[RMDB]
RNA sequence: GGGAACGACUCGAGUAGAGUCGAAAACUGAUGCUUCGUGGCGGAAACCGAUAUAGCGGAUCCCCGAGGCUUGGGCGGCGCGAGCCAGGUCGGUGAUCGGGAUGCCGACAACGCCGUAGAUGGUGUCCACCUAAACGACGUUCGCGUCGUUUAGGUGAAAAGAAACAACAACAACAAC
Reactivity to 2A3 in 0.01 (KOAc 150mM, MgCl2 10mM, bicine 150mM(pH8.5), 24C), signal-to-noise 2, nucleotides 027 to 126: c010u010g010a060u130g030c010u030u020c010g060u110g060g060c120g070g050a110a100a150c000c030g070a060u130a040u090a260g190c060g030g060a080u030c050c000c000c010g030a030g000g000c010u060u090g060g000g000c040g000g020c020g000c000g050a010g030c000c040a050g000g060u010c010g080g000u120g050a140u130c040g000g050g070a090u140g030c010c000g010a020c000a020a040c030g020c020c010g000u040a080g020a160u100g000g040u040g030u020c050
Reactivity to DMS in 0.01 (KOAc 150mM, MgCl2 10mM, bicine 150mM(pH8.5), 24C), signal-to-noise 2, nucleotides 027 to 126: c070u010g000a050u000g000c000u000u000c030g000u000g010g020c150g000g000a060a080a100c050c000g010a150u000a150u000a110g010c020g000g000a300u000c010c000c010c000g020a040g010g000c020u010u000g010g000g010c040g000g000c010g020c040g020a070g000c030c140a090g010g000u000c000g010g000u010g010a110u000c090g020g000g010a170u000g030c000c010g020a030c030a040a140c020g010c010c030g010u000a070g010a140u000g020g000u010g000u010c040